Source: RMDB library TTRDEL, as collected in RNAgym. The record gives the reactivity of an RNA of 177 nucleotides to DMS and 2A3. For 2A3, 1,419 sequencing reads were counted. For DMS the reverse transcriptase was MarathonRT. For 2A3 the reverse transcriptase was SuperScript II with manganese. The DMS profile rests on 893 reads.
[RMDB]
RNA sequence: GGGAACGACUCGAGUAGAGUCGAAAAGAUAUGGAAGGCAUGAAACACCUUGGAUUUAUCGGAAACGAUUGUCAGGUGUCAUGACCUUCCUAAGUCAAAGAGCUGCGAUGUUCGCAUCGCAGCUCAAGAGUACGACACUGUUCGCAGUGUCGUACUCAAAAGAAACAACAACAACAAC
Reactivity to DMS in 0.01 (KOAc 150mM, MgCl2 10mM, bicine 150mM(pH8.5), 24C), signal-to-noise 1, nucleotides 027 to 126: g000a010u000a300u030g020g010a040a020g000g020c010a000u010g000a090a120a090c010a000c000c000u020u010g030g000a020u010u010u010a030u000c000g010g010a160a140a120c000g000a010u000u000g000u000c010a000g000g040u010g010u000c000a000u000g000a110c000c010u000u000c000c010u000a010a070g000u000c040a120a140a110g020a050g010c000u060g020c000g030a000u000g000u010u010c230g080c000a000u000c000g050c000a000g000c000u010c000a000a010
Reactivity to 2A3 in 0.01 (KOAc 150mM, MgCl2 10mM, bicine 150mM(pH8.5), 24C), signal-to-noise 1, nucleotides 027 to 126: g030a000u080a000u150g020g000a010a030g010g040c010a000u020g010a250a180a060c020a000c000c060u060u290g120g000a060u190u270u120a050u090c000g030g050a120a030a040c030g020a010u020u020g030u020c030a000g080g000u020g030u000c000a000u000g000a010c000c000u000u010c000c000u000a010a000g010u000c010a000a140a140g000a000g030c020u000g000c040g000a000u000g000u090u200c270g010c210a020u000c000g000c000a000g000c000u000c000a010a000